[RMDB]
RNA sequence: GGGAACGACUCGAGUAGAGUCGAAAAAUGGCGUCCUGGAACCUGUUUUGUAGUCAACGAUAACCAAGUCUUCCCCUACUUGAUAUACCGCGUCGAUGAUAAAUCUUACAGGUGUGCCUCCGAAAUGCACAUCUGCAGACCACUCGAUUCCAGGACGGGAAUAUGCAGGAUUCGUCCUGCAUAUUCCAAAAGAAACAACAACAACAAC
Reactivity to 2A3 in 0.01 (KOAc 150mM, MgCl2 10mM, bicine 150mM(pH8.5), 24C), signal-to-noise 2, nucleotides 027 to 156: a000u090g070g000c010g000u000c000c000u000g000g010a010a000c010c020u080g080u080u120u140u130g090u100a070g060u100c030a060a020c030g010a030u040a120a110c070c000a060a000g000u000c100u080u090c060c000c000c000u000a010c000u040u020g020a020u060a020u030a270c060c080g010c020g040u020c030g020a020u020g000a010u060a170a140a020u010c020u020u080a070c000a000g000g020u000g000u000g000c010c000u190c070c040g110a130a120a060u110g010c000a000c000a010u000c000u000g000c000a000g000a010c010c000a030c020u050c020g110a130u000u020c000c000a010g000g000a000c010g010
Reactivity to DMS in 0.01 (KOAc 150mM, MgCl2 10mM, bicine 150mM(pH8.5), 24C), signal-to-noise 2, nucleotides 027 to 156: a140u010g000g010c010g030u010c020c000u010g000g010a040a030c010c000u020g010u010u010u010u000g020u000a210g010u010c020a100a040c000g040a040u000a000a020c030c000a010a020g020u000c080u000u000c020c020c040c070u000a060c010u000u000g010a040u000a170u000a050c050c030g010c040g010u000c070g030a060u000g000a160u000a130a090a080u010c020u000u000a030c020a000g000g000u020g040u000g000c040c050u000c110c300g000a110a140a140u000g000c000a030c000a010u000c010u000g000c090a090g000a080c020c050a090c060u000c080g010a170u020u000c000c000a030g030g000a050c010g000
Structure probing data (2A3 and DMS) for a 207-nucleotide construct. 2A3 adducts were read by reverse transcription with SuperScript II with manganese. Values cover nucleotides 27 to 156.